This 207-nucleotide RNA was probed chemically with DMS and 2A3. The reactions ran in a buffer of 150 mM KOAc, 10 mM MgCl2 and 150 mM bicine (pH 8.5), at 24 C. For 2A3 the reverse transcriptase was SuperScript II with manganese. Values cover nucleotides 27 to 156. DMS adducts were read by reverse transcription with MarathonRT. The 2A3 profile rests on 836 reads.
RNA sequence: GGGAACGACUCGAGUAGAGUCGAAAAGCAUUGAGCUAAAUGCCAGGCAUAUGCCUUUCCAAAUGGACUUGCCAUGAAGGAUGUCAUUCCUGUGCAGCCAGGUGUUGUCUUCUAUGUAUUUUUAGAAUGCCCAUCAUAUAGUCUCACCUUUUAAAGAAAUGCCUAGCUAGUUCGCUAGCUAGGCAUUAAAAGAAACAACAACAACAAC
Reactivity to DMS in 0.01 (KOAc 150mM, MgCl2 10mM, bicine 150mM(pH8.5), 24C), signal-to-noise 1, nucleotides 027 to 156: g030c020a120u010u000g040a170g000c070u010a040a100a080u000g000c020c060a090g010g030c160a180u020a050u010g020c000c020u010u010u000c060c050a070a200a160u010g020g010a080c120u000u000g030c000c010a050u000g020a110a070g000g000a130u030g040u000c050a140u000u010c010c020u010g020u010g050c020a080g010c060c080a170g010g010u000g010u010u000g000u000c060u000u000c050u000a100u030g010u010a060u040u000u000u000u000a040g000a040a050u000g030c010c050c000a080u010c040a110u000a170u020a070g000u000c050u000c030a060c040c010u000u000u010u000a040a010a200g010a100
Reactivity to 2A3 in 0.01 (KOAc 150mM, MgCl2 10mM, bicine 150mM(pH8.5), 24C), signal-to-noise 1, nucleotides 027 to 156: g000c030a000u060u080g000a040g010c030u100a080a080a000u070g000c030c030a020g000g000c030a080u080a010u200g010c040c000u030u060u050c010c010a020a030a050u060g000g010a080c110u130u180g110c080c020a010u040g010a170a050g000g030a050u050g030u070c020a010u010u050c000c010u060g080u160g000c000a000g050c000c040a010g000g040u010g020u020u160g050u100c020u070u040c000u040a030u020g060u000a240u170u170u010u010u030a020g020a050a040u030g050c020c040c000a050u060c010a010u040a010u020a170g050u020c000u040c020a080c000c000u080u070u000u220a200a120a000g010a040
For DMS, 2,198 sequencing reads were counted. Source: RMDB library OK3TST, as collected in RNAgym.